Conditions: 150 mM KOAc, 10 mM MgCl2 and 150 mM bicine (pH 8.5), 24 C. This 177-nucleotide RNA was probed chemically with DMS and 2A3. 2A3 adducts were read by reverse transcription with SuperScript II with manganese. For DMS, 5,288 sequencing reads were counted. DMS adducts were read by reverse transcription with MarathonRT.

RNA sequence: GGGAACGACUCGAGUAGAGUCGAAAAACAGACAGUAAUGCCUGUUGCAGAAAUGGUCUUUCCUAGCAUAGAGGUUGUCCAGAUGAUCAAUGAGGUUCCAUCAGAAGAUGGAGCUCAUUAUGUAAAACACUCUUCACCUAUUCGUAGGUGAAGAGUGAAAAGAAACAACAACAACAAC
Reactivity to DMS in 0.01 (KOAc 150mM, MgCl2 10mM, bicine 150mM(pH8.5), 24C), signal-to-noise 5, nucleotides 027 to 126: a010c030a010g010a020c020a010g000u000a100a080u000g020c010c020u000g000u000u010g030c140a090g010a060a090a100u010g010g010u000c050u000u000u000c010c020u010a120g010c130a090u010a110g000a060g010g020u000u000g000u000c030c040a110g000a100u000g010a100u010c110a040a010u000g000a030g010g000u000u000c000c000a020u000c010a160g030a110a140g000a010u000g010g010a010g010c000u000c000a000u000u000a050u000g020u000a040a080a090a120
Reactivity to 2A3 in 0.01 (KOAc 150mM, MgCl2 10mM, bicine 150mM(pH8.5), 24C), signal-to-noise 2, nucleotides 027 to 126: a000c000a000g070a000c000a000g040u110a130a050u060g010c000c000u140g060u070u080g000c050a020g040a080a080a030u110g050g010u000c000u020u040u010c000c010u000a040g000c060a070u050a100g210a050g090g090u030u040g010u000c030c010a000g050a180u090g010a060u150c080a040a040u020g020a030g100g170u130u020c000c000a000u000c000a050g230a300a020g010a050u000g000g000a000g000c010u000c010a010u020u010a040u060g080u100a030a090a000a010